[RMDB]
RNA sequence: GGGAACGACUCGAGUAGAGUCGAAAAGCAGAGACACCAGUCACAGACGCUAGAACUCACGCUACGUCAAGUCGAAUGUGACAGCGCGAAAGCAAGCGCAAGCUAUAGCGUUACGUACGAGUGGCGAAAAUAUAUAAAAUUUCGAUUUUAUAUAUUUAAAAGAAACAACAACAACAAC
Reactivity to DMS in 0.01 (KOAc 150mM, MgCl2 10mM, bicine 150mM(pH8.5), 24C), signal-to-noise 7, nucleotides 027 to 126: g030c070a100g010a120g020a100c060a050c050c060a130g010u000c030a050c060a130g000a070c030g020c070u020a010g010a110a170c040u000c070a150c050g010c010u010a070c090g000u000c050a110a100g020u020c110g020a110a120u050g010u030g000a020c020a080g010c080g000c020g000a090a090a080g020c080a130a060g010c030g020c130a100a040g010c030u010a160u010a080g010c010g000u000u000a050c120g010u010a060c090g000a120g010u000g010g000c030g000a080
Reactivity to 2A3 in 0.01 (KOAc 150mM, MgCl2 10mM, bicine 150mM(pH8.5), 24C), signal-to-noise 8, nucleotides 027 to 126: g070c050a030g030a010g020a120c020a030c040c040a020g010u020c020a020c000a050g050a030c030g000c030u040a040g040a140a040c030u020c050a050c040g000c010u080a030c060g080u050c040a050a030g090u100c040g080a140a110u190g040u070g040a010c020a010g010c010g000c010g110a170a070a020g090c070a060a050g040c030g010c070a040a020g010c020u040a030u070a100g000c000g020u020u070a040c080g030u070a030c050g030a030g060u010g030g010c000g020a070
Annotation: Chemical mapping of a 177-nucleotide RNA with DMS and 2A3. 2A3 adducts were read by reverse transcription with SuperScript II with manganese. Conditions: 150 mM KOAc, 10 mM MgCl2 and 150 mM bicine (pH 8.5), 24 C. For DMS the reverse transcriptase was MarathonRT.